This 207-nucleotide RNA was probed chemically with 2A3.
RNA sequence: GGGAACGACUCGAGUAGAGUCGAAAACGUUAAGCGUCGCGGCAACCAAUUAAGCGCCGAUUCCAAUCAGCGCGACUACGCCCUCGCUGCCUGAUCAGCGACGGCUAGCUGUCGGCCCGGGUUGUGUUCCCGAACCCGGAUGCCGGCAUCAUCUCAGCAAUACUGCUCGGUUCGCCGAGCAGUAUUGAAAAGAAACAACAACAACAAC
Reactivity to 2A3 in 0.01 (KOAc 150mM, MgCl2 10mM, bicine 150mM(pH8.5), 24C), signal-to-noise 3, nucleotides 027 to 156: c030g030u080u110a150a030g050c040g060u060c060g010c040g080g000c040a060a090c030c020a100a120u190u100a180a070g000c000g020c030c000g040a050u190u130c090c070a120a060u000c010a030g060c000g010c020g060a050c010u040a020c070g000c010c000c000u030c010g000c000u000g040c000c060u080g060a200u300c000a000g000c000g010a010c000g000g020c020u010a030g100c090u040g000u000c000g000g000c000c000c010g000g020g010u030u010g040u030g000u030u000c000c000c010g000a000a000c000c010c000g020g010a030u140g000c010c000g010g000c010a020u070c030a020u010c020u010c020a050g000

The reactions ran in a buffer of 150 mM KOAc, 10 mM MgCl2 and 150 mM bicine (pH 8.5), at 24 C.